[RMDB]
RNA sequence: GGGAACGACUCGAGUAGAGUCGAAAAGGACACGGGCGGCGACAUCCGCACCACCGCGCAGCGCCGGAAGAUCUACGCGCUGUGCGAGGCGCUGGGCUGGAAUGACGACCCGCGCCGCAUUCAAGGCUUCGUCAAGCGCGUGGCCCAUGUCGACCGCGUUCUAUACUAAUUUCGAUUAGUAUAGAACAAAAGAAACAACAACAACAAC
Reactivity to DMS in 0.01 (KOAc 150mM, MgCl2 10mM, bicine 150mM(pH8.5), 24C), signal-to-noise 2, nucleotides 027 to 156: g020g000a130c040a040c030g000g020g020c070g000g010c030g000a090c040a100u000c050c040g030c060a110c040c040a070c040c010g020c020g010c040a050g010c010g050c040c110g000g010a140a200g020a140u000c050u020a080c080g030c010g020c000u010g020u000g060c030g010a060g000g040c000g000c030u000g080g010g010c060u000g000g010a150a110u000g010a190c030g000a070c050c030c090g020c090g050c020c000g000c080a080u010u010c100a070a160g010g040c060u010u010c010g030u000c060a070a100g020c030g010c020g000u000g010g000c030c000c030a060u010g000u000c010g010a220c040c010g060c200
Reactivity to 2A3 in 0.01 (KOAc 150mM, MgCl2 10mM, bicine 150mM(pH8.5), 24C), signal-to-noise 5, nucleotides 027 to 156: g080g010a020c020a020c090g100g050g000c040g000g010c000g010a020c010a060u100c050c030g000c040a070c010c020a040c040c000g000c010g000c010a010g000c010g000c090c070g060g060a120a110g080a200u120c080u150a030c050g000c000g000c000u000g000u000g010c010g010a020g010g020c060g000c090u180g010g010g000c030u070g010g090a170a110u170g020a070c050g040a110c020c020c000g000c010g000c010c020g010c010a110u180u200c090a120a040g010g000c000u050u020c010g040u010c060a110a040g040c070g000c010g100u020g050g000c000c000c000a020u040g010u020c030g020a160c010c010g030c030